RNA sequence: GGGAACGACUCGAGUAGAGUCGAAAAGUAAACAGGUUGAGUAGAGUGUGAGCCGCUGCGAUACCAGCUCGAUUACGAGCCCUUGGCAGCGCGUGGGAAGGACGGGUCCCUGAAUAUAAAAAAGUAAUUCCAACUUUACAUUCGUGUAAAGUUGGAAAAAAGAAACAACAACAACAAC
Reactivity to DMS in 0.01 (KOAc 150mM, MgCl2 10mM, bicine 150mM(pH8.5), 24C), signal-to-noise 4, nucleotides 027 to 126: g030u000a040a100a130c080a080g010g010u000u000g000a120g000u000a060g000a100g020u000g000u000g010a170g030c060c020g010c010u000g000c020g010a070u000a050c140c170a180g000c010u000c000g000a250u010u010a120c090g000a020g000c010c050c070u000u010g000g010c010a010g000c010g020c080g020u010g020g000g000a060a090g000g000a070c090g010g010g000u000c030c000c010u000g000a050a060u020a080u020a020a050a060a050a100a090g000u010a080a110